[RMDB]
RNA sequence: GGGAACGACUCGAGUAGAGUCGAAAAGGGGAUGCCACGACCAUUGUCGGAUACGGUGACCGUCUCGCCUACAUGGAUAGUGACCUUAACUUCAUCGCAAUGGCCGGCAAGGGCUUCGUCGAUAGAGGCUCUGAUGGUUAUUCGUAACCAUCAGAGCAAAAGAAACAACAACAACAAC
Reactivity to 2A3 in 0.01 (KOAc 150mM, MgCl2 10mM, bicine 150mM(pH8.5), 24C), signal-to-noise 3, nucleotides 027 to 126: g020g000g030g020a010u060g000c020c000a020c030g010a000c010c010a040u020u050g060u150c110g090g020a030u030a080c050g060g000u030g020a040c000c030g000u000c010u010c010g020c010c010u120a180c070a180u240g030g000a080u090a250g090u020g050a000c020c000u100u220a030a030c020u080u020c040a040u020c020g030c030a030a020u050g020g010c000c000g000g000c050a040a060g040g060g020c000u070u040c010g300u030c030g020a020u100a110g100a030g140
Reactivity to DMS in 0.01 (KOAc 150mM, MgCl2 10mM, bicine 150mM(pH8.5), 24C), signal-to-noise 3, nucleotides 027 to 126: g030g020g010g010a110u000g000c010c040a150c050g000a020c000c020a070u000u000g000u000c070g010g020a080u000a100c190g000g000u000g010a180c240c280g000u000c020u010c070g010c040c010u010a080c160a140u010g000g000a030u000a060g020u000g000a030c010c030u000u010a170a110c030u000u000c110a070u000c040g010c040a000a060u010g030g010c010c000g010g020c130a080a100g020g020g020c040u000u000c030g010u010c010g010a170u010a090g000a130g000
The record gives the reactivity of an RNA of 177 nucleotides to 2A3 and DMS. For 2A3, 2,658 sequencing reads were counted. For DMS the reverse transcriptase was MarathonRT. The reactions ran in a buffer of 150 mM KOAc, 10 mM MgCl2 and 150 mM bicine (pH 8.5), at 24 C. For 2A3 the reverse transcriptase was SuperScript II with manganese. The DMS profile rests on 2,270 reads.